[RMDB]
RNA sequence: GGGAACGACUCGAGUAGAGUCGAAAACACGCGACUGCCGCAUCCCGCACGGGAGGCGCAGCUGCUGCAUGACGCUUUAACGUCGCAGCUCACCACCGCCUGACCAUUCUGCCAGGAGACAACGGUUUACGAUGAUGUAGUUCGCUACAUCAUCGUAAAAAGAAACAACAACAACAAC
Reactivity to 2A3 in 0.01 (KOAc 150mM, MgCl2 10mM, bicine 150mM(pH8.5), 24C), signal-to-noise 1, nucleotides 027 to 126: c050a020c080g070c020g100a120c050u060g040c060c110g000c010a000u020c000c020c000g060c100a170c160g030g000g010a050g020g030c000g000c010a010g020c030u050g000c010u010g020c010a120u260g000a000c020g070c070u090u200u240a250a040c040g000u000c030g000c000a000g000c010u030c000a060c060c010a020c040c030g030c010c020u040g050a130c040c010a120u100u020c040u100g000c030c000a010g020g020a000g040a000c020a070a000c020g050g000u000u050
Reactivity to DMS in 0.01 (KOAc 150mM, MgCl2 10mM, bicine 150mM(pH8.5), 24C), signal-to-noise 1, nucleotides 027 to 126: c040a110c180g030c110g000a090c020u000g010c080c100g030c120a100u010c010c030c000g000c220a090c190g010g010g000a000g030g000c030g010c010a030g020c090u000g010c000u010g040c060a140u000g020a010c030g050c000u020u010u020a060a130c000g030u000c010g040c040a030g000c030u000c130a110c040c040a050c060c010g010c030c050u020g000a060c000c080a190u000u020c100u000g000c060c010a060g000g000a050g000a020c130a010a090c030g010g000u010u000
The data come from the RNA Mapping Database (RMDB), library RFMREP. Chemical mapping of a 177-nucleotide RNA with 2A3 and DMS. The DMS profile rests on 871 reads. 2A3 adducts were read by reverse transcription with SuperScript II with manganese. For 2A3, 1,424 sequencing reads were counted.